[RMDB]
RNA sequence: GGGAACGACUCGAGUAGAGUCGAAAAUGCGCCAUGUCGCGCGCAAUGCGCUGCUGCCGCUCGUCACCAUGCUCGGGCUGCAAUCGGCGGCCAUGCUCGGCGGCAGCGUGGUGAUCGAGAGUGUCUUUGCGGUCCCCGGCUUCGGGCGCCUGGCGCAACACACUCAGGAAUUCGUUCCUGAGUGUGUAAAAGAAACAACAACAACAAC
Reactivity to 2A3 in 0.01 (KOAc 150mM, MgCl2 10mM, bicine 150mM(pH8.5), 24C), signal-to-noise 2, nucleotides 027 to 156: u050g000c010g010c000c000a040u130g040u130c040g010c000g000c000g000c170a070a140u240g000c030g000c040u110g020c000u020g000c010c000g030c110u150c040g080u070c050a100c110c020a050u060g010c020u060c140g130g040g000c030u030g000c020a090a220u290c050g160g000c000g000g040c020c000a050u140g000c030u020c070g070g000c000g010g000c010a000g010c000g010u000g000g000u010g000a030u080c030g000a030g010a070g140u150g100u130c090u090u070u090g040c000g000g070u040c050c030c010c010g030g030c010u130u150c030g050g010g050c030g000c000c000u000g010g000c000g000c000a000